[RMDB]
RNA sequence: GGGAACGACUCGAGUAGAGUCGAAAAGGCGCUGGCGAACUUGGGAUGGCGCGCCCGGAGGCGCAUGAGCGUCGUGUGUACGCAGGCGUGGCGCGUGUCGAAGGUGCACAGGUUGCAGGGCACGUCGCCGCCAUAGGGAGUUCGCUCCCUAUGGCGGAAAAGAAACAACAACAACAAC
Reactivity to 2A3 in 0.01 (KOAc 150mM, MgCl2 10mM, bicine 150mM(pH8.5), 24C), signal-to-noise 2, nucleotides 027 to 126: g040g020c040g050c090u070g020g030c030g010a030a000c040u060u100g070g030g080a050u120g050g040c010g000c000g030c030c000c000g060g050a160g020g000c000g000c060a130u130g100a110g030c010g000u000c050g010u110g010u050g000u030a070c030g000c120a020g030g040c020g030u090g000g000c000g010c000g030u020g010u020c020g070a150a060g110g030u050g010c020a000c030a130g140g060u130u000g020c020a040g000g000g050c000a000c110g110u110c100g000
Reactivity to DMS in 0.01 (KOAc 150mM, MgCl2 10mM, bicine 150mM(pH8.5), 24C), signal-to-noise 2, nucleotides 027 to 126: g010g020c000g040c040u040g010g020c000g000a010a070c080u000u000g010g000g000a150u030g000g030c070g000c040g000c030c020c090g000g040a140g010g010c000g040c040a160u020g000a090g010c020g030u010c030g000u000g010u000g000u020a040c080g000c050a080g040g020c080g010u030g030g070c000g010c030g010u000g020u000c010g040a180a050g000g020u000g000c040a030c060a140g000g040u040u000g000c010a120g000g000g000c020a020c010g000u010c030g010
An RNA of 177 nucleotides, treated with 2A3 and DMS and read out base by base.
It was measured as part of the RMDB library OK1LIB.
For 2A3 the reverse transcriptase was SuperScript II with manganese.
DMS adducts were read by reverse transcription with MarathonRT.
For 2A3, 1,140 sequencing reads were counted.